An RNA of 177 nucleotides, treated with 2A3 and DMS and read out base by base.
RNA sequence: GGGAACGACUCGAGUAGAGUCGAAAACGACGAUGAGGUCGGCGUGGUGCACGGCGACGCCGACGACGGCUACCCGGUCUUCGUCGACGCGCUGGUGAACAUGCGCCACACCCUGGCGCGGGCCGUCCAAGUAGUGCUCCUUCGGGAGCACUACUUGAAAAGAAACAACAACAACAAC
Reactivity to 2A3 in 0.01 (KOAc 150mM, MgCl2 10mM, bicine 150mM(pH8.5), 24C), signal-to-noise 1, nucleotides 027 to 126: c010g080a020c010g040a070u130g150a000g070g040u040c030g000g000c030g090u120g060g040u020g000c050a040c160g060g040c050g090a210c000g120c020c000g010a000c000g000a000c000g000g020c010u090a220c060c000c040g000g000u050c080u020u000c000g020u000c000g000a030c010g060c000g000c030u100g080g110u090g030a030a020c010a080u140g000c000g000c000c000a020c000a030c030c020c010u060g000g070c040g000c080g040g030g000c040c000g030u010c010
Reactivity to DMS in 0.01 (KOAc 150mM, MgCl2 10mM, bicine 150mM(pH8.5), 24C), signal-to-noise 1, nucleotides 027 to 126: c090g020a080c050g010a100u030g040a090g040g030u010c030g010g020c000g010u000g010g080u010g010c100a050c060g000g000c030g000a100c010g050c020c010g010a010c000g030a000c060g020g010c000u000a140c050c140c040g000g010u010c000u010u000c020g010u000c010g020a010c010g030c000g010c040u010g000g000u000g010a080a140c080a170u000g010c010g000c000c010a070c100a140c080c040c170u000g010g000c010g020c000g000g000g020c000c030g000u010c060
Background:
The 2A3 profile rests on 1,037 reads. For DMS the reverse transcriptase was MarathonRT. The reactions ran in a buffer of 150 mM KOAc, 10 mM MgCl2 and 150 mM bicine (pH 8.5), at 24 C. 2A3 adducts were read by reverse transcription with SuperScript II with manganese.